Source information:
An RNA of 207 nucleotides, treated with DMS and 2A3 and read out base by base. The reactions ran in a buffer of 150 mM KOAc, 10 mM MgCl2 and 150 mM bicine (pH 8.5), at 24 C.
[RMDB]
RNA sequence: GGGAACGACUCGAGUAGAGUCGAAAAAGUCGUGUAAGCCUGUAGUCCUAGCUACUUGGAAAGGCUAAAGUGGGAAGGAUCACUUGAGCUCAGGAGGUCAAGCCUGCAGUGAGCCAAAACUGUGCCACUGCACUCUAGCCUGGGCAACAGAGUAAGACUCUUCUAGGGGAUUCGUCCCCUAGAAGAGAAAAGAAACAACAACAACAAC
Reactivity to DMS in 0.01 (KOAc 150mM, MgCl2 10mM, bicine 150mM(pH8.5), 24C), signal-to-noise 2, nucleotides 027 to 156: a110g000u000c030g030u010g000u010a040a190g030c030c000u010g010u000a060g010u010c020c010u000a090g020c000u000a020c050u010u000g020g040a100a130a060g010g030c010u020a000a050a150g020u000g030g030g020a140a080g010g010a120u000c090a090c030u000u000g020a150g030c030u010c050a040g040g010a150g060g000u010c080a090a090g000c010c060u010g040c010a040g000u000g000a140g000c030c000a080a080a070a130c140u000g000u000g060c020c000a030c020u000g030c000a000c000u000c040u000a180g030c000c000u000g020g000g020c020a020a070c080a150g020a120g000u000a040a120g010a240
Reactivity to 2A3 in 0.01 (KOAc 150mM, MgCl2 10mM, bicine 150mM(pH8.5), 24C), signal-to-noise 3, nucleotides 027 to 156: a000g070u040c030g000u020g030u140a060a030g060c000c030u070g030u090a040g070u060c000c010u000a010g020c050u040a060c030u060u090g080g030a090a110a030g010g020c020u040a060a090a040g050u110g000g050g040a080a080g080g010a080u100c020a010c000u010u020g010a000g000c010u000c030a010g000g020a010g010g070u080c050a050a030g070c020c040u030g000c000a010g000u000g010a050g000c030c000a020a110a090a120c140u120g070u190g040c000c000a000c000u010g000c010a010c010u040c020u030a060g040c010c000u010g010g010g000c010a010a010c040a000g060a000g030u060a060a060g050a060
The data come from the RNA Mapping Database (RMDB), library OK3TST. DMS adducts were read by reverse transcription with MarathonRT. Reactivities are given for positions 27 through 156. For DMS, 3,661 sequencing reads were counted. The 2A3 profile rests on 1,871 reads.